[RMDB]
RNA sequence: GGGAACGACUCGAGUAGAGUCGAAAAUCACUUGCAGACCAAGCGUAUCAACAUAGAAAGCCCGCGACUUGGCAAGGUCUGUCACCCCAAGCUCCACAUGCGACAGGCGCACAAUGUUGAAUGGUGAACUCCUUUUACCUUUCGAGGUAAAAGGAGUAAAAGAAACAACAACAACAAC
Reactivity to 2A3 in 0.01 (KOAc 150mM, MgCl2 10mM, bicine 150mM(pH8.5), 24C), signal-to-noise 3, nucleotides 027 to 126: u030c000a010c060u040u100g010c030a000g040a050c000c000a040a020g020c020g020u080a050u210c030a020a160c010a070u160a130g190a200a140a000g030c060c040c000g080c070g070a140c020u060u060g020g000c060a060a000g020g010u020c020u010g020u020c030a050c010c030c010c010a000a020g010c020u050c020c000a080c000a060u080g000c010g040a030c010a050g000g000c030g000c020a010c020a050a080u090g000u020u050g020a080a150u050g040g030u060g020a030
Reactivity to DMS in 0.01 (KOAc 150mM, MgCl2 10mM, bicine 150mM(pH8.5), 24C), signal-to-noise 3, nucleotides 027 to 126: u000c090a070c060u000u000g000c050a070g000a110c050c010a070a210g010c050g000u010a080u010c080a050a080c050a090u010a100g020a130a170a200g000c010c020c040g020c070g000a090c050u000u000g020g010c100a090a210g010g000u000c000u010g000u020c070a110c030c010c010c020a090a100g010c040u000c030c020a040c080a050u000g010c030g000a070c060a040g000g000c020g050c060a040c080a050a040u010g010u000u010g010a030a050u010g010g000u010g010a070
Chemical mapping of a 177-nucleotide RNA with 2A3 and DMS. For 2A3, 2,386 sequencing reads were counted. It was measured as part of the RMDB library OK2TST. High DMS reactivity at an A or C suggests that its Watson-Crick edge is free.